[RMDB]
RNA sequence: GGGAACGACUCGAGUAGAGUCGAAAACACCACAGUGGUUGUGCCCCGGCUUAAGUUGGUCGACCACGUUUUCCCCCGUGCUCUGGACACGACGGUCGUCGUCCCCAGCUGGAUGAAACGGUGGCACCGAGUACUAAUGAUUCGUCAUUAGUACUCGAAAAGAAACAACAACAACAAC
Reactivity to 2A3 in 0.01 (KOAc 150mM, MgCl2 10mM, bicine 150mM(pH8.5), 24C), signal-to-noise 9, nucleotides 027 to 126: c110a030c020c020a040c050a070g100u110g060g040u060u070g020u060g030c010c010c000c000g090g000c060u130u120a120a040g050u130u100g050g010u050c030g010a020c040c010a020c020g000u080u020u060u050c010c010c000c000c000g030u040g020c030u040c050u120g070g020a050c020a010c070g080a020c040g040g070u130c050g010u010c010g020u020c020c010c000c000a020g010c030u040g020g060a110u080g060a090a070a030c040g000g040u100g070g000c000a020c040
Reactivity to DMS in 0.01 (KOAc 150mM, MgCl2 10mM, bicine 150mM(pH8.5), 24C), signal-to-noise 9, nucleotides 027 to 126: c180a180c040c030a110c220a100g010u010g000g010u010u000g010u010g000c020c020c030c000g000g000c060u010u020a050a070g020u000u010g010g020u020c050g000a030c070c020a050c020g010u010u010u010u000c010c010c010c120c020g010u010g000c110u010c040u010g000g010a080c110a050c030g020a080c090g010g000u020c090g010u010c060g010u000c030c050c000c030a050g000c030u000g000g020a070u020g000a070a110a080c030g010g020u020g010g010c030a080c090
Source: RMDB library OK1LIB, as collected in RNAgym. An RNA of 177 nucleotides, treated with 2A3 and DMS and read out base by base. Values cover nucleotides 27 to 126. DMS adducts were read by reverse transcription with MarathonRT.